[RMDB]
RNA sequence: GGGAACGACUCGAGUAGAGUCGAAAAUCAUUGGCUUCGCUGCGCGCUGCGUUGCCUAGGCUUCAGAUGCUUGGUACUGUUGCCAACGUUGCAAUUUCCAAACGCUAAUGCGAAAGUGUGCAAACAAGUGACGUGAUAAAUUCGUUUAUCACGUCACAAAAGAAACAACAACAACAAC
Reactivity to 2A3 in 0.01 (KOAc 150mM, MgCl2 10mM, bicine 150mM(pH8.5), 24C), signal-to-noise 6, nucleotides 027 to 126: u100c020a030u040u120g030g000c020u020u010c010g010c060u100g000c020g000c000g000c030u020g000c010g020u010u010g000c000c000u020a050g030g000c000u010u020c010a020g030a200u120g090c070u070u150g090g040u110a070c030u040g050u090u020g000c010c000a030a030c080g060u040u070g040c030a060a080u010u030u020c020c000a040a040a020c020g010c030u150a200a070u210g010c010g010a020a010a020g020u030g010u030g020c000a010a060a070c050a280a010
Reactivity to DMS in 0.01 (KOAc 150mM, MgCl2 10mM, bicine 150mM(pH8.5), 24C), signal-to-noise 5, nucleotides 027 to 126: u020c080a150u000u010g010g010c010u000u000c010g010c030u010g020c060g000c040g020c030u000g020c040g020u000u000g000c000c020u000a120g010g020c040u010u000c090a060g020a110u010g020c100u000u010g020g000u010a080c080u000g020u010u000g000c020c010a030a070c160g000u000u000g010c100a070a100u000u000u000c020c020a090a100a160c040g030c030u010a080a100u010g020c030g010a040a090a040g010u000g030u010g000c050a120a070a090c250a070a120